[RMDB]
RNA sequence: GGGAACGACUCGAGUAGAGUCGAAAAACGAGUCGUACGCGUCUCGAAUGGUAUUGUCGGCGUAAAAGAACAAGACGUCACCGGACGCGACCGGGCUAAAAAGCGAAACGUCAUCUACGGAUGACGAAAAACGGACCUGGGUUCGCCCAGGUCCGAACAUCAGAUGAUAGUUCGCUAUCAUCUGAUGAAAAGAAACAACAACAACAAC
Reactivity to 2A3 in 0.01 (KOAc 150mM, MgCl2 10mM, bicine 150mM(pH8.5), 24C), signal-to-noise 6, nucleotides 027 to 156: a000c020g000a010g020u010c010g010u050a040c080g020c010g050u000c010u060c070g050a130a150u180g090g030u240a170u120u210g120u100c060g010g030c020g020u060a050a080a100a070g130a090a040c080a080a050g080a030c010g010u020c010a000c030c010g000g010a010c000g000c010g000a010c000c010g000g030g000c040u060a090a000a000a020a000g020c030g040a100a030a010c000g000u000c000a000u000c000u020a020c160g110g000a000u000g000a000c010g010a060a000a000a000a000c000g000g000a000c000c000u000g000g040g000u030u060c140g090c020c000c010a000g000g000u000c000c000g000a000a000
Reactivity to DMS in 0.01 (KOAc 150mM, MgCl2 10mM, bicine 150mM(pH8.5), 24C), signal-to-noise 2, nucleotides 027 to 156: a100c010g000a030g020u000c020g010u000a080c060g050c020g000u000c000u030c040g020a110a090u000g000g000u000a080u000u000g000u010c040g040g010c040g040u010a100a080a090a200g020a090a160c080a050a110g030a060c010g020u000c030a120c030c030g020g030a040c020g020c010g000a090c060c040g020g000g000c070u020a010a000a050a080a110g040c050g010a040a070a090c010g030u000c000a000u000c010u000a160c300g040g000a000u000g010a020c000g000a010a030a040a140a160c000g070g000a040c000c000u000g020g040g040u000u000c300g000c000c030c000a010g000g010u000c000c010g010a000a020